[RMDB]
RNA sequence: GGGAACGACUCGAGUAGAGUCGAAAAGAUUGCUCUGAUUUUAUCUAAUCCAGUUGGCCAUUGUAGAACGGUCAAAAAAUUGGUGAAACGUUCAGGAAUGAGAGUGUACAUUGAGGUGGAUGACGUGAAGUUGAUAGCGUUUCGACGCUAUCAACUUAAAAGAAACAACAACAACAAC
Reactivity to DMS in 0.01 (KOAc 150mM, MgCl2 10mM, bicine 150mM(pH8.5), 24C), signal-to-noise 2, nucleotides 027 to 126: g020a090u000u000g000c060u010c020u010g010a100u000u010u000u000a040u010c020u000a140a140u010c040c060a070g020u000u000g000g000c000c000a110u000u020g020u020a090g000a040a040c090g000g010u010c020a000a030a080a090a060a060u010u000g000g020u010g010a060a090a070c090g010u010u000c050a020g000g010a080a060u010g010a060g010a040g020u000g000u010a080c070a070u000u000g010a040g000g020u000g020g020a080u010g000a100c080g000u010g010

The record gives the reactivity of an RNA of 177 nucleotides to DMS. The RNA was probed in 150 mM KOAc, 10 mM MgCl2 and 150 mM bicine (pH 8.5) at 24 C.